[RMDB]
RNA sequence: GGGAACGACUCGAGUAGAGUCGAAAACGACGGCUCCCGGGAAGAGACUCUCGGGCGCCAGCUGACGGAUUGCAAUGUCACCACGCGCGGGGAUAGAUCCUCUGCAGACGACUGAAAUGACCAAGCGUCAGGUUCUAUUGUUCGCAAUAGAACCUGAAAAAGAAACAACAACAACAAC
Reactivity to 2A3 in 0.01 (KOAc 150mM, MgCl2 10mM, bicine 150mM(pH8.5), 24C), signal-to-noise 4, nucleotides 027 to 126: c040g090a010c020g000g000c000u010c000c010c000g000g000g000a130a070g210a020g100a140c030u000c000u000c010g010g000g000c000g000c000c000a010g010c020u040g010a010c040g040g060a090u020u130g060c060a070a090u090g030u040c020a030c050c030a040c060g030c000g000c020g030g010g020g000a020u070a170g140a140u080c000c010u030c050u110g000c000a020g040a070c020g020a020c030u080g050a020a050a070u090g010a040c000c000a070a010g050c030g040
Reactivity to DMS in 0.01 (KOAc 150mM, MgCl2 10mM, bicine 150mM(pH8.5), 24C), signal-to-noise 2, nucleotides 027 to 126: c040g020a130c150g000g020c010u000c000c000c020g030g000g010a010a070g040a170g000a300c130u000c000u010c000g020g000g000c180g020c030c000a040g000c080u000g000a130c050g020g000a100u000u010g010c080a080a070u030g000u010c010a090c070c010a180c070g040c020g020c040g000g000g000g050a120u020a150g020a100u010c000c000u000c030u030g040c040a120g020a100c040g030a100c030u020g010a080a060a070u000g010a110c080c050a040a060g000c080g000